[RMDB]
RNA sequence: GGGAACGACUCGAGUAGAGUCGAAAAUCUUUGCUGUAUUAGCGCCAAAGGCACAACUAGGAGGGCAUCGAGACCUCCUAGUACAAGAGAUCAUGACCAAAAUUGUUCACGCAGCGUCAGAAACAUUUUCUAGGUCGUUGCUAUCCACCACCGACGACUGAUGCAAAGACUUCGGUCUUUGCAUCAGAAAAGAAACAACAACAACAAC
Reactivity to 2A3 in 0.01 (KOAc 150mM, MgCl2 10mM, bicine 150mM(pH8.5), 24C), signal-to-noise 1, nucleotides 027 to 156: u000c000u170u100u050g030c050u040g010u230a090u130u170a120g070c050g000c050c070a110a200a060g120g000c110a040c010a040a180c000u000a000g000g000a000g000g030g000c010a080u060c190g040a090g020a010c000c010u020c000c000u000a000g000u010a010c000a000a030g000a000g000a060u040c070a040u160g100a050c010c010a070a080a070a070u110u140g000u120u090c040a010c190g000c010a020g010c000g070u070c040a000g100a030a040a000c090a120u080u110u110u150c110u070a060g000g170u040c040g000u020u000g000c000u040a040u000c010c000a020c000c000a010c000c070g050a060c010g060a040